[RMDB]
An RNA of 177 nucleotides, treated with DMS and 2A3 and read out base by base. The 2A3 profile rests on 1,024 reads. As a SHAPE reagent, 2A3 marks flexible, mostly unpaired nucleotides at the ribose 2'-OH. It was measured as part of the RMDB library RFMREP.

RNA sequence: GGGAACGACUCGAGUAGAGUCGAAAAUUGAGAACUCUGAUGAGGUAUUGUAGCAUCGGGUUACGGUAGCCGAGUCAGUUGAUUCUCAUCAUGUGGCACUUCGACGGUGAACAGUUAUGGCCUCUGAUCGUUCCAAUAACUUCGGUUAUUGGAACGAAAAAGAAACAACAACAACAAC
Reactivity to DMS in 0.01 (KOAc 150mM, MgCl2 10mM, bicine 150mM(pH8.5), 24C), signal-to-noise 2, nucleotides 027 to 126: u010u000g000a050g010a010a030c050u000c040u020g000a020u000g000a300g020g030u000a010u000u000g000u000a030g000c010a300u000c230g000g040g030u000u000a000c010g010g020u000a020g060c010c000g000a270g000u000c000a010g000u020u000g010a150u000u000c010u000c000a050u000c070a040u000g000u010g010g020c020a040c080u000u000c140g010a070c160g010g000u000g010a100a050c050a150g000u010u000a080u000g000g010c050c040u000c040u000g000a220
Reactivity to 2A3 in 0.01 (KOAc 150mM, MgCl2 10mM, bicine 150mM(pH8.5), 24C), signal-to-noise 1, nucleotides 027 to 126: u070u030g010a000g010a030a010c010u000c010u000g000a000u010g010a030g010g030u010a000u020u020g010u010a010g000c010a040u280c210g300g230g000u000u000a000c000g060g020u000a040g260c010c020g000a010g000u000c010a000g070u040u040g040a170u000u000c000u020c000a000u020c000a010u120g140u040g110g000c010a000c040u070u030c080g160a010c060g090g030u090g000a090a040c000a080g000u100u050a090u100g040g020c030c010u050c020u050g030a040